[RMDB]
Source: RMDB library M2PK50, as collected in RNAgym. This 177-nucleotide RNA was probed chemically with DMS and 2A3. The DMS profile rests on 6,638 reads.
RNA sequence: GGGAACGACUCGAGUAGAGUCGAAAAUGAGAAGCAUUCGUGCUUCUCAGAAAUGCUGCGCAAAGAGGACCUGGGGGUGUCUGGGCUGCUAAACUCAUCAGCUAACCGCGAUCUUCGGAUCGCGGAAUAAAUCAGUAGGGUUCGCCCUACUGAUUUAAAAAGAAACAACAACAACAAC
Reactivity to DMS in 0.01 (KOAc 150mM, MgCl2 10mM, bicine 150mM(pH8.5), 24C), signal-to-noise 5, nucleotides 027 to 126: u000g000a020g000a020a000g010c000a030u000u010c190g020u000g010c000u000u000c000u000c000a020g000a090a110a100u010g010c040u000g000c080g020c070a040a090a120g000a090g010g010a080c050c050u000g010g010g000g000g020u000g000u000c040u000g000g000g010c030u010g000c080u010a050a070a090c070u000c080a070u010c070a060g010c100u010a100a210c010c000g010c000g000a010u000c000u000u010c190g020g000a010u000c000g000c000g000g000a010a020
Reactivity to 2A3 in 0.01 (KOAc 150mM, MgCl2 10mM, bicine 150mM(pH8.5), 24C), signal-to-noise 2, nucleotides 027 to 126: u010g000a000g000a010a000g010c020a020u060u180c210g060u050g000c000u010u000c000u000c000a010g010a000a070a010u110g020c030u040g030c040g000c050a120a000a070g120a100g060g020a050c010c020u050g030g000g000g010g010u030g010u020c020u030g060g020g000c030u040g030c000u040a030a040a020c040u030c030a130u010c030a080g060c060u060a090a080c000c000g000c010g000a000u000c000u060u030c130g110g000a000u010c010g010c000g000g000a000a010